Source: RMDB library OK3TST, as collected in RNAgym. The record gives the reactivity of an RNA of 207 nucleotides to 2A3 and DMS. 2A3 is a SHAPE reagent: it acylates the 2'-hydroxyl of flexible nucleotides of all four kinds.
RNA sequence: GGGAACGACUCGAGUAGAGUCGAAAAAUGGUUUUAGUCAUGGCUCUAGCACUUGCUAGGUGUGUGCCCUGGGUCUUGACUUUGCCUCUCUGAACCUCAAUUUUCUGGGCUGUAUAAUGAAGAUAAUACCUUGCUUACAGGAUAGGUAUAAGUGUUAGUAAAUUACCUGAUUCGUCAGGUAAUUUACAAAAGAAACAACAACAACAAC
Reactivity to 2A3 in 0.01 (KOAc 150mM, MgCl2 10mM, bicine 150mM(pH8.5), 24C), signal-to-noise 5, nucleotides 027 to 156: a010u180g010g000u070u300u060u070a000g000u030c000a010u040g010g000c000u010c040u050a010g000c010a020c060u050u190g060c070u110a110g080g050u080g040u020g010u020g060c130c160c070u010g010g000g000u010c000u020u030g000a000c000u010u000u030g000c010c000u030c010u000c030u040g120a090a080c000c010u050c090a120a140u070u030u080u050c040u050g020g020g000c020u030g090u070a070u050a100a200u150g120a050a080g040a090u110a130a020u010a100c020c020u020u090g020c020u080u070a090c030a020g040g030a050u040a040g040g030u030a040u030a100a040g040u030g050u130u130a030
Reactivity to DMS in 0.01 (KOAc 150mM, MgCl2 10mM, bicine 150mM(pH8.5), 24C), signal-to-noise 2, nucleotides 027 to 156: a100u020g010g010u000u010u000u000a030g020u000c000a040u010g000g010c000u000c000u000a060g000c000a050c040u000u000g030c070u000a110g020g020u000g020u010g000u000g000c000c060c080u010g030g030g030u010c010u010u000g010a040c040u000u000u010g020c000c060u010c060u010c050u010g010a080a140c040c010u010c060a070a120u020u010u000u000c040u020g020g000g020c060u000g020u000a110u000a070a110u000g020a100a090g000a130u000a060a060u010a060c020c030u000u010g000c030u000u010a130c090a150g020g020a300u000a010g020g010u000a040u000a000a080g030u010g020u000u010a130